[RMDB]
RNA sequence: GGGAACGACUCGAGUAGAGUCGAAAAAGAGGGAUUUAGAUCCAAGUGGUCACUCCUACUCCCAUUGGAGACGCAAUUUGGCAUUGUGUAUAAAAGAAGAGUUUUUCUAAUAGUGCUGUGUUAGGGUCCUGAAUUCCAGCUGCUGCCAUUCAAACAACGGUGGCUAAAUAUUCGUAUUUAGCCACCGAAAAGAAACAACAACAACAAC
Reactivity to 2A3 in 0.01 (KOAc 150mM, MgCl2 10mM, bicine 150mM(pH8.5), 24C), signal-to-noise 2, nucleotides 027 to 156: a000g140a060g050g020g000a040u050u100u170a070g010a000u040c010c000a080a000g070u110g090g000u050c010a010c030u000c000c000u000a060c030u000c000c000c000a010u020u100g010g010a050g000a000c020g000c040a040a070u080u000u140g050g010c040a010u010u020g010u010g010u040a030u130a250a100a020a030g090a010a020g070a010g050u010u060u060u150u000c080u080a180a160u070a150g040u040g000c010u000g030u030g030u170u120a040g030g050g000u030c010c080u030g050a010a050u120u030c030c010a050g000c020u070g030c020u050g020c040c010a030u070u050c050a070a080a080c040a110a060
Reactivity to DMS in 0.01 (KOAc 150mM, MgCl2 10mM, bicine 150mM(pH8.5), 24C), signal-to-noise 1, nucleotides 027 to 156: a130g000a110g030g010g010a140u000u010u000a050g010a120u010c000c040a090a080g000u040g040g030u000c060a120c040u010c050c010u010a080c090u000c020c000c050a300u000u010g020g010a110g000a030c060g010c070a030a030u010u000u020g010g050c020a140u000u000g050u030g030u000a170u010a130a070a090a060g010a070a160g010a160g030u000u010u010u030u000c030u010a070a110u000a140g000u000g020c020u000g050u000g050u000u000a070g010g000g020u000c030c060u010g000a030a090u020u000c040c010a090g030c050u010g030c020u000g030c000c070a200u000u010c040a070a050a090c050a110a300